[RMDB]
RNA sequence: GGGAACGACUCGAGUAGAGUCGAAAAUCUACUAGAUAACUACUCAUUGGUGGAAGAUAUUAUCGAGGUGGCCUACAAUGCCAGCGUAACCAGCGUUAGGUUUACAGCAUUUUAUGUUCUGGGAUUACUAUCAUACGGUAUUCGUACCGUAUGAUAGAAAAGAAACAACAACAACAAC
Reactivity to 2A3 in 0.01 (KOAc 150mM, MgCl2 10mM, bicine 150mM(pH8.5), 24C), signal-to-noise 9, nucleotides 027 to 126: u010c000u050a070c030u040a060g040a080u050a060a060c010u040a020c010u050c050a140u060u180g080g000u060g070g040a070a030g030a070u080a040u160u060a050u060c020g010a050g070g030u020g020g000c000c010u030a050c060a060a060u090g010c010c010a010g000c040g020u020a030a050c020c010a030g030c040g070u050u100a080g040g000u050u060u070a030c030a020g030c010a040u050u060u060u130a110u140g060u060u020c020u030g040g020g050a060u100u100a070
Reactivity to DMS in 0.01 (KOAc 150mM, MgCl2 10mM, bicine 150mM(pH8.5), 24C), signal-to-noise 9, nucleotides 027 to 126: u010c020u000a070c080u010a140g010a050u000a060a090c040u010a050c050u000c040a170u010u010g010g020u010g010g000a090a070g010a100u000a060u000u000a040u000c050g010a100g010g010u000g010g010c030c040u010a060c180a070a060u000g010c020c030a080g010c090g010u010a050a080c050c050a090g010c100g010u000u000a060g010g000u000u000u000a060c090a090g010c050a050u000u000u000u010a060u010g010u000u000c030u000g000g000g000a120u000u010a140